[RMDB]
RNA sequence: GGGAACGACUCGAGUAGAGUCGAAAAGAUGAGAACAUACUGUUCAGUUGGGCAAUCAGGUGACACUCCAAGUCUUGCAGGAGGUCACGAGCAAGAAAAAGAGGACGGCCUGACUUAACAAAAGAAAGCCAUAAUGGAGGUUCGCCUCCAUUAUGGCAAAAGAAACAACAACAACAAC
Reactivity to DMS in 0.01 (KOAc 150mM, MgCl2 10mM, bicine 150mM(pH8.5), 24C), signal-to-noise 2, nucleotides 027 to 126: g000a200u100g030a090g000a070a090c010a080u010a120c140u000g020u000u000c080a050g000u010u000g000g020g070c090a000a080u020c000a090g000g000u000g000a020c080a040c000u000c010c070a120a150g050u000c160u050u000g010c100a120g010g020a050g040g000u000c040a000c000g000a140g000c160a080a010g030a150a070a030a160a290g000a070g000g010a030c300g000g000c000c000u000g000a010c030u000u030a030a000c010a120a220a050a080g000a110a020a080
Reactivity to 2A3 in 0.01 (KOAc 150mM, MgCl2 10mM, bicine 150mM(pH8.5), 24C), signal-to-noise 3, nucleotides 027 to 126: g040a070u300g040a010g160a190a020c090a060u210a080c010u000g000u000u010c060a000g000u010u020g020g000g000c030a060a110u080c030a050g050g060u010g000a010c090a130c150u000c000c000a020a120g040u060c060u080u140g140c100a070g000g000a000g000g000u000c010a000c000g010a010g030c080a190a060g060a080a040a000a000a010g180a060g110g030a000c020g030g000c020c000u000g000a000c000u000u000a000a000c020a000a100a000a040g120a060a060a000
The record gives the reactivity of an RNA of 177 nucleotides to DMS and 2A3. Conditions: 150 mM KOAc, 10 mM MgCl2 and 150 mM bicine (pH 8.5), 24 C. High DMS reactivity at an A or C suggests that its Watson-Crick edge is free. For DMS, 2,020 sequencing reads were counted. Reactivities are given for positions 27 through 126. The 2A3 profile rests on 1,872 reads.